Description
The data come from the RNA Mapping Database (RMDB), library OK1LIB. Chemical mapping of a 177-nucleotide RNA with 2A3 and DMS. For 2A3 the reverse transcriptase was SuperScript II with manganese. For 2A3, 2,207 sequencing reads were counted.

RNA sequence: GGGAACGACUCGAGUAGAGUCGAAAAAAAUGGCUGCUUAUGUGGGGAUUUCAGCGGAUACAUUACGAUAUUAUGAAAAAAAUAAAAUAAUUGUACCUAAUCGGCUGGAAAACGGGUAUCGUGUGUACUAGGACCUAAUAUUCGUAUUAGGUCCUAGAAAAGAAACAACAACAACAAC
Reactivity to 2A3 in 0.01 (KOAc 150mM, MgCl2 10mM, bicine 150mM(pH8.5), 24C), signal-to-noise 4, nucleotides 027 to 126: a010a000a040u100g010g020c040u030g010c020u090u080a050u110g060u070g000g020g030g050a050u020u130u140c010a010g010c030g050g000a050u040a030c020a010u110u090a030c020g000a010u020a020u200u100a060u150g050a040a040a010a030a020a040a030u170a050a060a040a010u200a060a040u110u120g030u050a030c000c000u040a090a070u090c000g070g000c010u000g040g040a000a110a010a000c040g020g000g050u020a030u080c040g000u020g020u000g010u040a020
Reactivity to DMS in 0.01 (KOAc 150mM, MgCl2 10mM, bicine 150mM(pH8.5), 24C), signal-to-noise 3, nucleotides 027 to 126: a070a040a070u000g000g010c020u010g010c070u000u020a050u000g000u010g010g000g000g000a100u010u000u000c030a070g020c080g000g000a050u010a010c070a050u000u000a020c010g000a260u010a040u000u010a060u050g000a000a000a040a130a090a020a060u010a030a050a040a100u030a030a020u000u020g000u000a030c050c030u020a120a040u000c040g010g000c010u000g000g000a020a000a060a080c090g000g000g020u000a020u020c090g020u020g030u000g000u030a100